An RNA of 177 nucleotides, treated with 2A3 and DMS and read out base by base. For DMS, 2,189 sequencing reads were counted. DMS adducts were read by reverse transcription with MarathonRT. For 2A3, 1,133 sequencing reads were counted. Source: RMDB library OK2TRN, as collected in RNAgym. High 2A3 reactivity points to a flexible backbone, as in loops and unpaired stretches.
[RMDB]
RNA sequence: GGGAACGACUCGAGUAGAGUCGAAAAAAGUAGGAUUCAGGUGGUCUAUGAGAAGACAUACUGUGUUACAGGACAACUUAUAGAAGGCUUGUGUUUUAACCCUGUCCCUAACCUUGCACUGACACAACAGGUGAACAGAGUUCGCUCUGUUCACCUGAAAAGAAACAACAACAACAAC
Reactivity to 2A3 in 0.01 (KOAc 150mM, MgCl2 10mM, bicine 150mM(pH8.5), 24C), signal-to-noise 1, nucleotides 027 to 126: a010a000g090u050a020g020g020a020u000u030c020a000g040g040u140g080g050u070c030u030a030u020g040a050g000a150a070g070a020c010a000u300a100c020u000g080u070g020u140u120a050c010a030g000g020a000c000a030a030c060u030u050a090u000a060g010a030a010g080g000c020u030u040g030u000g010u010u070u030u050a040a060c000c040c000u030g010u010c020c000c070u000a060a070c010c020u020u010g010c030a030c150u040g080a010c000a000c010a200a110
Reactivity to DMS in 0.01 (KOAc 150mM, MgCl2 10mM, bicine 150mM(pH8.5), 24C), signal-to-noise 3, nucleotides 027 to 126: a080a090g020u000a080g000g000a100u000u000c020a040g020g030u010g010g030u020c010u010a040u000g000a060g010a030a170g010a070c090a090u020a130c080u000g000u000g000u010u010a110c020a010g000g010a070c080a050a150c020u000u000a050u000a020g010a040a050g000g020c010u000u000g020u000g010u000u000u010u000a090a090c060c020c000u010g000u000c010c000c030u020a090a080c070c060u000u010g000c050a080c080u000g000a050c090a030c140a040a120